[RMDB]
RNA sequence: GGGAACGACUCGAGUAGAGUCGAAAAUCGGGGUUAGCCUUGGCUAUAGGUGGACCAAAACCGAUUAACCAUACAUUUGGCCACCAACCCCGGAUCACUGCAAACGAAAAAGUAUGGGGAUGCUCCCUGUAAGGCCAAGGUUCGCCUUGGCCUUACAAAAAGAAACAACAACAACAAC
Reactivity to 2A3 in 0.01 (KOAc 150mM, MgCl2 10mM, bicine 150mM(pH8.5), 24C), signal-to-noise 2, nucleotides 027 to 126: u010c000g000g000g000g030u020u060a040g010c000c020u080u300g100g060c000u040a060u070a110g000g000u000g000g230a300c000c000a000a000a000a070c070c010g000a060u130u040a100a100c060c040a030u060a060c100a060u050u000u000g000g010c000c000a030c000c000a000a030c030c000c000c000g000g030a020u040c000a030c030u070g000c010a000a120a020c070g090a220a000a110a000a000g060u140a020u110g000g000g000g110a020u110g040c050u020c030c000c000
Reactivity to DMS in 0.01 (KOAc 150mM, MgCl2 10mM, bicine 150mM(pH8.5), 24C), signal-to-noise 1, nucleotides 027 to 126: u040c080g020g000g000g040u000u000a000g000c040c030u000u020g010g000c020u010a040u000a060g010g080u000g010g010a240c060c000a000a000a070a090c110c120g000a110u060u030a280a100c060c130a060u000a080c200a090u010u000u000g000g030c000c000a010c000c010a200a040c010c000c030c060g000g000a090u030c020a060c020u000g000c160a020a040a200c100g010a080a120a120a010a150g000u010a000u010g000g030g010g000a170u000g030c110u000c050c000c000

Conditions: 150 mM KOAc, 10 mM MgCl2 and 150 mM bicine (pH 8.5), 24 C. An RNA of 177 nucleotides, treated with 2A3 and DMS and read out base by base. 2A3 is a SHAPE reagent: it acylates the 2'-hydroxyl of flexible nucleotides of all four kinds. It was measured as part of the RMDB library RFM100.